An RNA of 207 nucleotides, treated with 2A3 and read out base by base.
RNA sequence: GGGAACGACUCGAGUAGAGUCGAAAAACCAUCAAAUUGCCGGGACAUCCUGUUCACAUGCUGCUGGUACCUCCAGGCACAGGGAAACCUUGCACUGGAACCAUGGUGAAAGCCGUGGGUAUGGUAAAAAUCUGGCAGCUAGGGACGAUCGGCAGCCCCCAAUACAUUCCUUCGGGAAUGUAUUGGGAAAAGAAACAACAACAACAAC
Reactivity to 2A3 in 0.01 (KOAc 150mM, MgCl2 10mM, bicine 150mM(pH8.5), 24C), signal-to-noise 3, nucleotides 027 to 156: a010c030c010a060u170c050a030a060a110u120u010g000c000c000g020g000g030a050c010a030u010c010c020u060g050u300u300c190a120c020a180u100g000c000u010g000c000u000g020g010u000a000c000c010u000c000c000a000g030g000c020a030c110a020g020g000g000a030a040a040c010c000u000u010g020c180a250c240u000g000g000a000a010c000c000a000u020g000g020u040g040a060a020a010g010c010c000g020u030g000g000g030u180a300u160g010g000u010a020a050a010a010a010u010c000u000g010g000c010a000g000c010u010a000g000g000g010a020c010g030a040u030c000g000g000c000a000g010c010c010
Source information
2A3 adducts were read by reverse transcription with SuperScript II with manganese. The RNA was probed in 150 mM KOAc, 10 mM MgCl2 and 150 mM bicine (pH 8.5) at 24 C. The 2A3 profile rests on 2,947 reads.